[RMDB]
Structure probing data (DMS and 2A3) for a 207-nucleotide construct. 2A3 adducts were read by reverse transcription with SuperScript II with manganese. The 2A3 profile rests on 755 reads. The DMS profile rests on 1,583 reads. High 2A3 reactivity points to a flexible backbone, as in loops and unpaired stretches. The RNA was probed in 150 mM KOAc, 10 mM MgCl2 and 150 mM bicine (pH 8.5) at 24 C. Reactivities are given for positions 27 through 156.
RNA sequence: GGGAACGACUCGAGUAGAGUCGAAAAGAGUGAACGGAGACGGUCUGAAGCUGAUCAUUUUCAUCGAAGAAAGAGAUAGUUCCGUCUGGUACAACAUCGCCGACAGUAAUUGGAGCCAUGAAGAGAUCUCUGUGGUUUUGAAGACAGAGGAAAAUAACCCCGAUAAUACGUUCGCGUAUUAUCGGGGAAAAGAAACAACAACAACAAC
Reactivity to DMS in 0.01 (KOAc 150mM, MgCl2 10mM, bicine 150mM(pH8.5), 24C), signal-to-noise 1, nucleotides 027 to 156: g000a080g000u000g000a120a070c070g000g010a050g020a020c000g000g000u000c060u030g030a120a140g050c050u020g000a110u010c000a150u000u000u000u000c030a120u000c000g010a140a170g020a100a080a030g050a120g000a060u010a100g010u000u000c020c000g070u000c040u000g040g000u010a070c050a070a040c010a170u020c060g030c010c000g010a090c010a070g020u020a060a130u000u010g040g000a160g020c020c010a120u020g000a030a090g020a180g010a090u000c010u000c000u010g060u000g010g010u000u000u000u010g010a010a140g050a090c030a030g020a060g000g010a070a030a090a050u000a130a170
Reactivity to 2A3 in 0.01 (KOAc 150mM, MgCl2 10mM, bicine 150mM(pH8.5), 24C), signal-to-noise 2, nucleotides 027 to 156: g090a000g020u110g010a080a040c000g070g040a030g000a010c020g020g020u000c030u080g060a090a020g000c010u060g010a060u030c060a070u000u060u070u070c200a220u080c100g110a090a060g040a050a120a010g060a000g010a030u030a090g000u060u010c000c020g000u000c060u030g020g020u090a020c020a110a020c000a100u080c070g040c020c030g000a000c030a050g000u120a080a060u080u070g030g000a000g030c010c010a040u110g010a000a010g010a000g010a070u020c010u000c000u020g040u050g000g110u030u060u130u140g040a040a030g020a000c030a000g000a020g010g120a010a240a030a020u300a050a070